[RMDB]
Chemical mapping of a 177-nucleotide RNA with DMS and 2A3. For DMS, 1,544 sequencing reads were counted. The RNA was probed in 150 mM KOAc, 10 mM MgCl2 and 150 mM bicine (pH 8.5) at 24 C.

RNA sequence: GGGAACGACUCGAGUAGAGUCGAAAAAUGUAAUCCUUUAGUGUUUGGUUAUCGUGCUCCAAAUCAAGCACGGAUCCUUUCGAUUUCAGCACCAUAUACAGCGGGAUAAUUAUGCUUGUCAGAUGGGCGUUAUCAUUGGCUUCGGCCAAUGAUAACGAAAAGAAACAACAACAACAAC
Reactivity to DMS in 0.01 (KOAc 150mM, MgCl2 10mM, bicine 150mM(pH8.5), 24C), signal-to-noise 2, nucleotides 027 to 126: a060u000g020u010a110a050u000c010c020u000u000u000a090g010u000g010u010u000u010g000g000u010u010a040u000c130g020u010g010c010u010c080c100a090a050a070u000c240a050a030g030c000a040c030g000g000a040u000c030c070u000u000u010c080g000a080u000u000u000c150a060g020c060a080c050c040a030u000a090u000a070c060a060g010c110g020g010g020a100u000a090a060u000u000a120u010g000c040u010u030g000u010c120a110g000a100u010g030g020g020
Reactivity to 2A3 in 0.01 (KOAc 150mM, MgCl2 10mM, bicine 150mM(pH8.5), 24C), signal-to-noise 1, nucleotides 027 to 126: a000u130g000u080a040a000u050c040c000u050u060u220a160g070u030g000u100u050u000g000g000u010u060a070u190c020g010u070g040c000u060c050c030a060a090a140u160c190a110a010g000c000a040c000g080g060a020u020c000c000u050u040u080c080g110a220u000u140u030c020a010g000c140a090c040c010a050u000a010u060a050c000a020g030c060g010g000g150a000u170a080a000u220u110a100u210g000c010u100u120g070u070c020a000g030a180u020g030g110g000